RNA sequence: GGGAACGACUCGAGUAGAGUCGAAAACGUAUCAGCGCUCGCGUACACCUUCCUCCCUCAUUGGAGGAUUGGUUGCUUGCCCGACUCAGACUUACCUCGAAGCGCAGAUGGUCAGAGCCUCAUUGAGGCCUCGGAUAUCGUUCGCGAUAUCCGAGGCAAAAGAAACAACAACAACAAC
Reactivity to DMS in 0.01 (KOAc 150mM, MgCl2 10mM, bicine 150mM(pH8.5), 24C), signal-to-noise 2, nucleotides 027 to 126: c120g020u000a090u010c080a080g000c070g010c020u010c090g030c130g030u010a130c130a040c010c010u000u000c000c010u000c010c000c300u000c300a140u010u000g010g030a000g000g000a010u020u000g010g020u000u000g010c060u000u000g030c020c020c020g040a110c070u000c130a090g000a050c060u000u010a080c140c050u000c040g010a100a070g000c040g020c020a050g010a040u010g010g030u000c020a070g000a110g010c030c020u000c030a160u010u000g000a050g020
Reactivity to 2A3 in 0.01 (KOAc 150mM, MgCl2 10mM, bicine 150mM(pH8.5), 24C), signal-to-noise 2, nucleotides 027 to 126: c050g020u080a060u140c080a020g010c010g040c060u050c040g040c060g030u060a020c020a020c060c000u020u020c000c000u030c000c010c000u260c080a210u080u240g000g030a010g000g000a000u010u040g020g020u030u030g010c050u090u090g000c000c000c030g030a050c030u070c100a040g000a140c000u030u060a040c000c010u030c020g070a090a030g010c000g020c060a020g030a080u060g000g000u030c030a030g010a010g040c000c000u000c060a190u070u220g050a010g070